[RMDB]
RNA sequence: GGGAACGACUCGAGUAGAGUCGAAAAGAUAUGGAUCGGUUAGGGAGAGCACAUAGGUGACUUGAUGUUCGGAAACGAACAUCAAGUCACCUAUGUAGCUCGAAGAACUAAUAACGAUCCUAAGUCACCAAUCCUUAAAGUUCGCUUUAAGGAUUGGAAAAGAAACAACAACAACAAC
Reactivity to DMS in 0.01 (KOAc 150mM, MgCl2 10mM, bicine 150mM(pH8.5), 24C), signal-to-noise 2, nucleotides 027 to 126: g020a080u010a300u000g000g020a000u000c010g060g030u000u000a010g000g000g010a140g000a010g040c000a060c000a030u000a000g030g050u020g050a010c020u000u010g040a030u010g070u010u020c010g000g010a170a110a300c030g010a010a010c000a000u000c000a000a030g000u020c010a000c010c000u010a000u010g000u000a090g070c000u000c000g000a020a150g000a190a200c010u000a000a030u000a120a180c000g000a020u000c000c010u000a030a100g000u010c030a210
Conditions: 150 mM KOAc, 10 mM MgCl2 and 150 mM bicine (pH 8.5), 24 C. This 177-nucleotide RNA was probed chemically with DMS. The DMS profile rests on 1,394 reads. Values cover nucleotides 27 to 126. DMS adducts were read by reverse transcription with MarathonRT.